An RNA of 177 nucleotides, treated with DMS and 2A3 and read out base by base. High 2A3 reactivity points to a flexible backbone, as in loops and unpaired stretches. DMS adducts were read by reverse transcription with MarathonRT. The RNA was probed in 150 mM KOAc, 10 mM MgCl2 and 150 mM bicine (pH 8.5) at 24 C.
[RMDB]
RNA sequence: GGGAACGACUCGAGUAGAGUCGAAAAUGCCAGGGGUUCGCCCCUGGCACAUUACCGAGAAAGCAGCUCGGUAUAAAACUCCAACCCUUGGAAACAAGGGAAACUUUGACACAUUCGUGUGUCAAAAUAUAAGCACUACAUUCGUGUAGUGCUUAUAAAAAGAAACAACAACAACAAC
Reactivity to DMS in 0.01 (KOAc 150mM, MgCl2 10mM, bicine 150mM(pH8.5), 24C), signal-to-noise 3, nucleotides 027 to 126: u000g000c000c000a010g010g010g020g020u000u010c240g020c000c000c000c010u000g000g010c000a000c040a040u010u000a030c000c000g000a020g010a120a140a140g020c210a160g020c000u000c000g000g000u000a020u000a030a070a130a140c110u000c020c070a110a210c010c000c010u000u000g000g000a140a090a200c000a010a010g010g000g000a040a020a030c180u000u000u000g010a000c000a010c010a030u000u020c190g010u000g040u000g000u000c010a000a010a050a130
Reactivity to 2A3 in 0.01 (KOAc 150mM, MgCl2 10mM, bicine 150mM(pH8.5), 24C), signal-to-noise 2, nucleotides 027 to 126: u030g000c010c000a000g030g030g010g000u040u060c120g130c000c000c000c000u000g000g000c000a000c000a000u010u020a000c010c010g010a020g000a020a300a020g190c070a030g030c010u000c000g000g010u000a000u000a000a020a000a010c040u000c020c010a120a140c010c000c000u000u000g010g000a080a030a010c020a000a010g000g010g000a000a060a000c010u000u020u040g000a000c000a010c000a010u060u160c200g040u050g010u010g000u010c000a000a000a010a000